[RMDB]
RNA sequence: GGGAACGACUCGAGUAGAGUCGAAAAUGCGUUUCCGGCCUGAGGAGACCAAGUCAGGACCCUUUGAGGAGAAGGUUAUCCAAGUCCGCUAUGAUCCCUGUAGGCAAGUUUGGGAUGUGGGAUGAUGUGCUGGGAGAGAUUUCGAUCUCUCCCAGCAAAAAGAAACAACAACAACAAC
Reactivity to DMS in 0.01 (KOAc 150mM, MgCl2 10mM, bicine 150mM(pH8.5), 24C), signal-to-noise 1, nucleotides 027 to 126: u020g000c100g010u000u000u000c000c000g030g010c010c010u010g000a110g010g020a040g030a080c050c000a050a090g010u000c050a100g000g000a060c100c010c030u000u010u000g010a150g000g020a240g010a020a060g010g000u000u000a190u000c100c050a090a080g030u000c010c030g000c080u010a080u000g000a080u000c030c040c000u010g040u000a040g000g010c090a070a100g000u000u000u010g030g000g030a040u020g020u000g000g010g010a130u000g010a110u000g010
Source: RMDB library OK2TRN, as collected in RNAgym. This 177-nucleotide RNA was probed chemically with DMS.